[RMDB]
RNA sequence: GGGAACGACUCGAGUAGAGUCGAAAAGUUACGGAAGUCAAGCGCCUCACCGGGCUCGAUGUUUCCUAUGAGGAUGCCUUCGAUAUUCUGAAGCGCCUUGGCUUUGGCGUGGAAGGUGACGGCAAGACGAUAGUAUCGAUUUCGAUCGAUACUAUCGAAAAGAAACAACAACAACAAC
Reactivity to 2A3 in 0.01 (KOAc 150mM, MgCl2 10mM, bicine 150mM(pH8.5), 24C), signal-to-noise 8, nucleotides 027 to 126: g020u040u080a060c040g010g040a050a030g040u050c050a070a040g060c050g070c060c010u030c010a050c030c040g010g020g010c020u030c030g040a060u100g070u030u030u050c010c000u030a150u160g090a060g080g030a050u050g010c010c000u010u020c020g080a080u030a180u280u070c030u050g010a020a010g000c020g000c020c000u070u090g190g020c020u120u080u070g010g000c020g010u020g020g020a050a020g020g030u040g010a010c030g000g000c020a020a030g060a020
Reactivity to DMS in 0.01 (KOAc 150mM, MgCl2 10mM, bicine 150mM(pH8.5), 24C), signal-to-noise 9, nucleotides 027 to 126: g010u010u000a080c060g010g010a110a070g000u000c060a080a100g010c160g010c050c010u010c050a080c080c080g010g010g010c040u000c060g000a090u010g010u010u000u000c000c000u000a110u010g000a070g000g010a110u000g010c060c020u000u000c030g020a090u010a090u010u010c030u010g000a280a170g000c010g000c040c020u000u000g000g010c130u010u010u000g010g010c030g020u000g000g010a150a050g000g010u000g010a070c090g000g010c060a070a090g000a210
An RNA of 177 nucleotides, treated with 2A3 and DMS and read out base by base.
Values are in units of 0.01, from 0 to 300, in steps of 10.
For DMS the reverse transcriptase was MarathonRT.